[RMDB]
RNA sequence: GGGAACGACUCGAGUAGAGUCGAAAAGAUAUGGAGAAGUGCGCUGAUGACCCUAUGGAGGCUCGGAAACGAGUGAAGUAGGCAAGGCGGCUUCUCCUAAGUCACUAGCAUGAGUUCGCUCAUGCAACUUUGGCUAUACCUUCGGGUAUAGCCAAAGAAAAGAAACAACAACAACAAC
Reactivity to DMS in 0.01 (KOAc 150mM, MgCl2 10mM, bicine 150mM(pH8.5), 24C), signal-to-noise 2, nucleotides 027 to 126: g000a050u000a300u000g000g020a000g000a020a040g040u010g010c010g010c010u010g000a080u000g010a060c300c000c010u000a030u000g020g000a220g000g020c010u010c020g000g000a050a110a190c010g010a000g010u000g010a300a150g000u000a050g000g060c040a070a050g020g040c000g000g000c010u000u000c010u000c000c000u000a000a050g000u010c030a220c190u010a090g010c000a000u030g010a010g000u000u020c240g050c020u000c000a000u000g010c000a010a070
Reactivity to 2A3 in 0.01 (KOAc 150mM, MgCl2 10mM, bicine 150mM(pH8.5), 24C), signal-to-noise 1, nucleotides 027 to 126: g030a020u060a030u080g000g030a010g010a010a010g040u300g300c010g000c010u030g030a300u070g000a090c070c000c000u000a010u010g080g060a100g020g300c000u000c010g030g000a010a030a070c000g020a020g030u200g050a060a010g040u030a020g020g020c020a000a120g000g000c030g000g000c000u010u000c000u000c000c000u000a000a000g000u000c020a020c200u140a040g020c000a000u000g000a000g010u110u160c180g060c090u020c000a020u000g000c000a000a030